This 177-nucleotide RNA was probed chemically with DMS and 2A3. Source: RMDB library M2PK50, as collected in RNAgym. The DMS profile rests on 3,259 reads. Values are in units of 0.01, from 0 to 300, in steps of 10.
RNA sequence: GGGAACGACUCGAGUAGAGUCGAAAAGGAUGCUCGUUCGCGAGCAUCCACUGAGAUAGCCACUAUAAAGAUUAAGUCUUCCUACUCGAGACAGGAAGUCUAUGCUCCUGGCCUUCGGGCCAGGAAACAGAAAAUAUACGUUCGCGUAUAUUUUCUGAAAAGAAACAACAACAACAAC
Reactivity to DMS in 0.01 (KOAc 150mM, MgCl2 10mM, bicine 150mM(pH8.5), 24C), signal-to-noise 4, nucleotides 027 to 126: g010g010a000u000g020c000u000c000g020u000u020c200g010c010g010a020g000c010a010u000c000c000a030c100u010g000a190g000a060u010a090g020c080c060a060c130u000a100u010a080a050a070g000a080u010u010a110a070g010u000c010u000u000c040c000u000a070c060u000c100g000a070g000a120c120a060g010g010a030a060g000u000c030u010a070u010g010c150u000c000c000u000g000g000c000c000u000u000c220g010g010g010c010c010a010g000g000a010a030a110
Reactivity to 2A3 in 0.01 (KOAc 150mM, MgCl2 10mM, bicine 150mM(pH8.5), 24C), signal-to-noise 4, nucleotides 027 to 126: g010g000a000u000g000c010u010c010g020u050u050c210g000c010g080a000g000c000a000u000c000c000a010c010u050g020a030g030a050u110a050g070c080c020a060c060u130a100u160a300a190a040g110a110u160u190a120a030g030u010c000u010u000c000c000u020a060c030u040c070g080a060g040a110c030a030g000g070a050a030g020u010c040u060a110u120g080c010u010c010c000u000g000g020c010c010u030u050c240g050g000g000c000c000a010g000g000a000a000a000